[RMDB]
RNA sequence: GGGAACGACUCGAGUAGAGUCGAAAAGGUGUCGGCUGAGGUCAAGAAAGCCAUUCGCAAGCGUGACCGCGUGUGCCUGUGCUGCGGCAAGCGGACCCAGUUGCAGGUGGAUCACAUUCAGUCGCGCUCGGAGUAAGAUCUUCGGAUCUUACUCCGAAAAAGAAACAACAACAACAAC
Reactivity to 2A3 in 0.01 (KOAc 150mM, MgCl2 10mM, bicine 150mM(pH8.5), 24C), signal-to-noise 2, nucleotides 027 to 126: g040g000u080g070u150c010g030g060c030u040g030a030g010g090u070c040a030a050g090a100a070a020g080c030c050a040u170u130c100g030c130a080a020g050c020g040u010g000a020c000c010g000c030g040u080g010u030g040c000c000u000g010u050g030c070u070g010c030g050g000c060a090a050g110c060g140g000a180c000c060c020a040g030u110u230g010c010a020g000g000u060g040g090a090u140c020a020c000a050u000u090c000a010g020u010c010g020c010g000c000
Reactivity to DMS in 0.01 (KOAc 150mM, MgCl2 10mM, bicine 150mM(pH8.5), 24C), signal-to-noise 2, nucleotides 027 to 126: g010g020u010g000u000c070g020g000c050u000g000a120g010g010u000c120a090a100g000a060a090a140g020c010c040a130u000u000c110g020c070a100a090g000c030g040u010g000a040c010c000g020c120g000u010g010u000g000c010c060u000g020u000g010c020u000g000c140g010g000c050a090a070g000c140g020g000a140c030c000c000a030g000u000u000g070c020a030g000g000u020g010g000a130u010c100a040c020a080u010u010c020a020g020u000c010g000c000g020c020
The record gives the reactivity of an RNA of 177 nucleotides to 2A3 and DMS.
For DMS, 2,288 sequencing reads were counted.
For 2A3, 1,974 sequencing reads were counted.